[RMDB]
RNA sequence: GGGAACGACUCGAGUAGAGUCGAAAAGUCUCGCGCUCAUCGGUCAGAGCGGCGACAUAGACCGCUGGUCGGUAUAGAGCAUUUCCAGCAAAAGUGCGUAGCGGUUUUGCGUUGGAUAAUGCGACCAAUCCUGACCGUCAUUCGUGACGGUCAGGAUAAAAGAAACAACAACAACAAC
Reactivity to DMS in 0.01 (KOAc 150mM, MgCl2 10mM, bicine 150mM(pH8.5), 24C), signal-to-noise 2, nucleotides 027 to 126: g010u000c040u000c030g030c020g030c000u000c010a050u000c050g000g020u000c060a080g010a050g010c030g060g010c180g000a090c070a100u000a120g020a010c010c000g000c150u010g020g000u030c020g020g040u010a110u010a190g010a150g000c000a040u000u000u000c000c000a100g000c010a010a020a030a050g000u000g000c000g020u010a140g040c000g000g000u000u000u000u000g000c040g010u030u000g010g000a010u000a010a040u010g010c010g010a070c020c010a140
Reactivity to 2A3 in 0.01 (KOAc 150mM, MgCl2 10mM, bicine 150mM(pH8.5), 24C), signal-to-noise 2, nucleotides 027 to 126: g010u010c000u000c020g070c000g000c000u010c010a110u060c040g030g050u030c020a020g010a000g100c030g000g050c000g020a060c040a020u110a050g080a090c000c020g000c050u080g040g060u070c040g050g040u090a120u070a120g080a000g020c000a000u010u040u000c000c010a000g020c000a000a020a000a060g300u060g000c080g270u170a080g030c000g070g020u000u000u000u040g050c080g050u060u050g000g000a020u020a250a010u090g000c000g020a010c010c000a010